RNA sequence: GGGAACGACUCGAGUAGAGUCGAAAAGAUAUGGACUCACGACCUUCAACAGCCACACAUCGGAAACGAUGUAAGUGGACAUGAAGUGGAGUGAGUCCUAAGUCAAACCAAAUCUUCGGAUUUGGAACGACUCAUAUGUCUUCGGACAUAUGAGUCGAAAAGAAACAACAACAACAAC
Reactivity to DMS in 0.01 (KOAc 150mM, MgCl2 10mM, bicine 150mM(pH8.5), 24C), signal-to-noise 1, nucleotides 027 to 126: g020a040u010a300u000g010g000a030c000u040c000a000c060g000a300c010c030u000u030c010a050a100c300a300g000c000c010a000c000a160c000a000u000c000g010g000a100a180a200c000g010a010u000g010u060a020a090g030u000g000g010a040c070a080u000g000a000a000g020u000g080g000a300g000u010g000a000g030u000c000c000u000a000a080g010u010c030a140a150a180c000c000a000a020a010u000c040u010u010c260g070g000a040u000u010u000g030g000a080a130
Reactivity to 2A3 in 0.01 (KOAc 150mM, MgCl2 10mM, bicine 150mM(pH8.5), 24C), signal-to-noise 2, nucleotides 027 to 126: g000a000u090a020u210g000g010a000c010u000c000a000c010g110a100c010c000u060u060c050a160a150c060a290g060c010c000a000c000a000c000a000u000c000g050g000a060a020a020c000g010a000u010g000u050a250a090g010u010g000g100a020c000a110u140g020a060a020g040u260g140g000a020g000u010g000a010g000u000c000c020u010a000a000g020u000c020a070a020a100c000c000a010a000a000u000c020u030u100c300g150g000a010u030u000u010g000g060a090a100
Structure probing data (DMS and 2A3) for a 177-nucleotide construct. Source: RMDB library TTRDES, as collected in RNAgym.